Structure probing data (2A3 and DMS) for a 177-nucleotide construct. For DMS the reverse transcriptase was MarathonRT. It was measured as part of the RMDB library TTRDES. 2A3 adducts were read by reverse transcription with SuperScript II with manganese.
RNA sequence: GGGAACGACUCGAGUAGAGUCGAAAAGAUAUGGAAAUGUUGGCACCGAUAAGCUCCAAUCGGAAACGAUUGUGAGCUUUUGACGGUGAGACAUUUCCUAAGUCAAACCUAUAGUUCGCUAUAGGAAGCUAUAUCACGUGUUCGCACGUGAUAUAGCAAAAGAAACAACAACAACAAC
Reactivity to 2A3 in 0.01 (KOAc 150mM, MgCl2 10mM, bicine 150mM(pH8.5), 24C), signal-to-noise 2, nucleotides 027 to 126: g010a000u050a030u130g000g010a040a030a040u030g030u010u080g300g160c000a010c030c030g130a100u070a290a010g000c000u000c010c000a000a010u000c000g000g120a060a050a000c010g000a010u000u030g030u190g130a010g000c040u000u000u000u010g000a020c020g010g010u000g000a000g000a000c000a000u000u000u000c000c000u020a080a010g000u010c040a010a030a190c000c000u010a010u000a010g040u020u100c300g010c200u030a000u010a030g100g000a060a040
Reactivity to DMS in 0.01 (KOAc 150mM, MgCl2 10mM, bicine 150mM(pH8.5), 24C), signal-to-noise 2, nucleotides 027 to 126: g000a030u030a300u000g010g010a000a000a000u010g000u000u000g020g030c030a020c010c000g020a160u010a030a000g000c000u010c000c000a000a000u000c000g010g000a120a140a110c010g000a010u000u010g000u010g030a010g000c000u000u000u000u000g010a220c140g060g010u000g000a300g010a020c000a010u000u000u000c000c000u010a040a120g010u000c030a090a140a130c000c000u000a010u000a000g000u000u030c300g040c010u000a000u000a000g000g000a090a130